[RMDB]
RNA sequence: GGGAACGACUCGAGUAGAGUCGAAAACGCGAUCUAUGGUGGUUGCCGCAUUGACUUGACGCACACUGGCUGCUUUAUCGUUAUUGGAAAUCGAGACAACAGAACCAGGAUUAAAACGGAUCGGCAAGCGGUAAAAUGAUUUCGAUCAUUUUACCGCAAAAGAAACAACAACAACAAC
Reactivity to DMS in 0.01 (KOAc 150mM, MgCl2 10mM, bicine 150mM(pH8.5), 24C), signal-to-noise 3, nucleotides 027 to 126: c090g020c070g010a060u000c030u000a100u000g000g000u000g000g010u000u000g000c020c030g010c100a050u000u000g010a080c070u000u000g020a090c020g000c140a060c130a110c090u000g000g000c050u010g000c110u000u000u010a130u000c030g010u000u000a110u010u000g010g010a080a070a040u010c060g010a050g000a080c170a030a040c050a050g000a080a060c020c000a040g000g020a110u000u010a030a070a090a130c110g000g010a060u000c030g010g010c120a060a090
Reactivity to 2A3 in 0.01 (KOAc 150mM, MgCl2 10mM, bicine 150mM(pH8.5), 24C), signal-to-noise 3, nucleotides 027 to 126: c050g020c010g050a040u000c010u080a070u130g110g000u000g000g000u050u040g040c030c010g000c020a060u020u110g090a080c090u050u080g010a010c020g010c050a010c000a010c040u030g060g000c050u040g000c000u090u060u030a060u050c030g020u020u040a140u150u210g090g080a080a140a000u070c010g000a000g050a060c030a040a010c000a030g020a040a040c010c000a000g030g010a030u080u150a010a010a000a000c050g060g000a020u020c010g040g010c030a090a000
The record gives the reactivity of an RNA of 177 nucleotides to DMS and 2A3. For DMS the reverse transcriptase was MarathonRT. The reactions ran in a buffer of 150 mM KOAc, 10 mM MgCl2 and 150 mM bicine (pH 8.5), at 24 C. Reactivities are given for positions 27 through 126. It was measured as part of the RMDB library OK2TST.